[RMDB]
RNA sequence: GGGAACGACUCGAGUAGAGUCGAAAAGAUAUGGAGCUGUGGGAGGCUUGGACCUCGGAAACGAGCUAGCCUUCCACGAGCUCCUAAGUCAAACUGUCAAACAAUCCUUCGGGAUUGUUUGACAGAACCUGUAUAUCGAGUUCGCUCGAUAUACAGGAAAAGAAACAACAACAACAAC
Reactivity to DMS in 0.01 (KOAc 150mM, MgCl2 10mM, bicine 150mM(pH8.5), 24C), signal-to-noise 3, nucleotides 027 to 126: g000a060u000a300u010g000g000a020g020c000u000g000u000g010g000g000a020g010g000c000u000u000g020g000a170c300c010u000c000g000g000a060a110a170c010g000a020g010c020u000a010g010c000c010u000u000c000c010a010c010g000a000g020c010u010c000c000u000a000a070g010u000c020a110a080a240c010u000g000u000c000a000a010a010c000a010a010u000c000c000u000u000c190g050g000g000a010u000u010g010u000u000u000g000a010c000a000g000a030a090
Reactivity to 2A3 in 0.01 (KOAc 150mM, MgCl2 10mM, bicine 150mM(pH8.5), 24C), signal-to-noise 2, nucleotides 027 to 126: g020a010u110a070u140g000g000a000g000c000u000g030u000g040g020g000a000g030g000c030u080u140g080g110a230c070c020u000c020g020g000a060a070a010c020g020a000g020c010u010a000g000c010c000u000u010c000c010a000c000g000a000g000c010u000c000c000u000a070a010g020u000c060a050a060a150c000u010g000u000c010a000a010a000c000a000a000u000c010c000u060u140c300g020g000g000a000u010u000g010u000u000u010g000a000c010a000g000a000a010

Structure probing data (DMS and 2A3) for a 177-nucleotide construct. Source: RMDB library TTRDEL, as collected in RNAgym. Conditions: 150 mM KOAc, 10 mM MgCl2 and 150 mM bicine (pH 8.5), 24 C.